[RMDB]
RNA sequence: GGGAACGACUCGAGUAGAGUCGAAAAGUGCUCUGGAGUAGAGGCUCUGCCUUCGAAACACCAUCGAUCGUCCCUUCUUCUUUACCUUCUUCUGGCUCUUCUUGGAGACGCGACCGGUGGCGCCCCUGCUCGGUUCGCUCCAACCUGCUUUUGUUCUAUCAAGUACAAUCUUCGGAUUGUACUUGAUAAAAGAAACAACAACAACAAC
Reactivity to 2A3 in 0.01 (KOAc 150mM, MgCl2 10mM, bicine 150mM(pH8.5), 24C), signal-to-noise 3, nucleotides 027 to 156: g020u030g010c000u000c010u030g020g000a030g010u040a010g020a010g020g020c020u050c130u300g040c040c020u140u210c020g020a050a000a000c020a040c070c030a060u110c060g000a100u050c070g080u050c030c010c000u010u020c040u060u000c040u050u100u050a120c030c010u030u050c000u050u030c050u060g040g000c000u030c000u130u060c010u030u110g070g000a040g030a140c040g000c040g040a030c020c010g030g030u070g040g050c050g050c000c030c000c030u020g020c010u020c060g010g010u060u060c000g000c010u000c000c000a020a030c010c030u070g060c060u180u090u060u080g020u080u010c010u030

This 207-nucleotide RNA was probed chemically with 2A3. For 2A3 the reverse transcriptase was SuperScript II with manganese. The reactions ran in a buffer of 150 mM KOAc, 10 mM MgCl2 and 150 mM bicine (pH 8.5), at 24 C. Reactivities are given for positions 27 through 156. The data come from the RNA Mapping Database (RMDB), library VIROID.